This 177-nucleotide RNA was probed chemically with DMS and 2A3. The reactions ran in a buffer of 150 mM KOAc, 10 mM MgCl2 and 150 mM bicine (pH 8.5), at 24 C.

RNA sequence: GGGAACGACUCGAGUAGAGUCGAAAAACAUCAUGGGGAAAGCAUUUAGAAUGUACCCAGUGCUUUGGGGUGCUUGGUGCCACCCAGCACUGUGAGCACAGGUUCUUCUACCUUGGGGCCACACCCACACGUUCAGCUGUUUCGACAGCUGAACGUGAAAAGAAACAACAACAACAAC
Reactivity to DMS in 0.01 (KOAc 150mM, MgCl2 10mM, bicine 150mM(pH8.5), 24C), signal-to-noise 1, nucleotides 027 to 126: a050c040a030u030c080a110u000g000g020g000g020a130a180a090g000c160a040u000u000u000a050g040a070a030u010g000u010a040c060c040c030a110g010u000g010c000u000u010u000g090g010g000g030u000g000c050u020u000g010g060u000g060c170c150a020c080c010c050a060g000c000a000c000u000g000u000g030a150g040c000a030c000a120g000g000u000u000c090u000u000c000u000a090c050c020u000u000g020g000g000g000c020c080a120c190a160c000c000c000a120
Reactivity to 2A3 in 0.01 (KOAc 150mM, MgCl2 10mM, bicine 150mM(pH8.5), 24C), signal-to-noise 1, nucleotides 027 to 126: a030c030a050u170c020a090u090g000g000g000g040a160a010a000g050c020a000u090u020u100a110g060a140a080u120g010u060a000c030c010c010a020g010u000g000c000u130u160u140g190g070g000g020u000g000c000u060u100g140g060u160g170c030c040a050c000c000c020a020g060c010a000c000u120g140u060g150a010g020c040a020c010a030g000g120u050u010c010u000u020c000u050a100c030c070u050u090g100g000g100g000c060c010a020c000a020c040c020c020a030